Conditions: 150 mM KOAc, 10 mM MgCl2 and 150 mM bicine (pH 8.5), 24 C. Chemical mapping of a 177-nucleotide RNA with 2A3 and DMS. The data come from the RNA Mapping Database (RMDB), library RFM100.
[RMDB]
RNA sequence: GGGAACGACUCGAGUAGAGUCGAAAAAUGAGGGUCUGGAUGAAUGCCGUAUAGAAGGAGCCGUGGAUAAAAUAUGUCGCAACCGCAAAGGCAAGCAAUGCACCGAUCAUGCUGAAAAAAACACGAGUUACUGAGGACGAUUCGUCGUCCUCAGUAAAAAAGAAACAACAACAACAAC
Reactivity to 2A3 in 0.01 (KOAc 150mM, MgCl2 10mM, bicine 150mM(pH8.5), 24C), signal-to-noise 2, nucleotides 027 to 126: a000u210g000a120g000g020g000u000c020u040g050g130a080u070g120a010a180u020g030c000c000g050u000a090u090a100g110a040a010g040g000a010g000c000c000g030u020g000g020a010u080a100a100a050a060u220a100u160g090u120c010g000c010a040a050c000c000g060c030a110a010a000g080g000c020a050a000g020c000a050a040u140g040c070a060c000c000g000a010u120c000a000u080g060c040u010g010a030a000a000a000a000a000a000c070a020c080g040a060g100
Reactivity to DMS in 0.01 (KOAc 150mM, MgCl2 10mM, bicine 150mM(pH8.5), 24C), signal-to-noise 2, nucleotides 027 to 126: a090u020g000a110g000g000g020u030c060u010g000g000a090u000g020a100a100u010g000c020c040g060u000a080u000a080g020a120a080g000g020a080g020c020c030g000u000g010g000a080u040a090a100a130a120u060a000u050g000u020c030g020c040a100a040c070c170g030c100a050a030a120g020g000c060a040a070g000c110a040a080u000g020c000a050c000c040g000a050u010c080a090u030g020c040u000g000a000a000a040a090a040a010a150c130a040c090g040a050g010